[RMDB]
RNA sequence: GGGAACGACUCGAGUAGAGUCGAAAAUCUUUGCUUACUCACCACAGCUUACACUUGUGUUUCCGGAAGUGAAGAUGAUACUUUUAUUAUACACAUGUUUAGGUUUCAUGUGUACUUGCUAUUUUGGGGAGAGGCAACUUCGGUUGCCUCAAAAGAAACAACAACAACAAC
Reactivity to 2A3 in 0.01 (KOAc 150mM, MgCl2 10mM, bicine 150mM(pH8.5), 24C), signal-to-noise 4, nucleotides 027 to 129: u000c000u010u010u010g000c000u000u060a270c000u010c060a040c000c030a000c010a000g040c000u150u130a000c060a020c050u070u130g010u000g010u020u170u070c050c030g070g050a020a000g000u010g010a040a000g000a010u140g000a030u100a100c010u040u140u040u030a110u140u090a080u040a010c000a000c000a000u000g050u070u100u140a130g070g080u050u100u090c020a000u000g000u010g000u020a030c020u020u050g050c020u040a070u160u080u080u120g080g000g010g010a070
Reactivity to DMS in 0.01 (KOAc 150mM, MgCl2 10mM, bicine 150mM(pH8.5), 24C), signal-to-noise 5, nucleotides 027 to 129: u020c020u010u000u020g010c010u000u040a020c030u000c000a150c280c010a070c080a010g050c070u060u070a130c230a070c160u010u020g030u000g020u050u050u000c210c100g050g000a040a020g020u010g020a000a050g030a040u020g040a120u030a090c000u040u070u030u030a080u030u040a170u030a040c000a030c010a060u000g000u030u010u030a160g070g060u060u020u030c040a000u010g010u010g020u020a010c210u050u050g040c080u110a130u010u030u090u000g030g010g050g020a130
The record gives the reactivity of an RNA of 170 nucleotides to 2A3 and DMS. The data come from the RNA Mapping Database (RMDB), library 15KLIB. The RNA was probed in 150 mM KOAc, 10 mM MgCl2 and 150 mM bicine (pH 8.5) at 24 C. The 2A3 profile rests on 5,124 reads.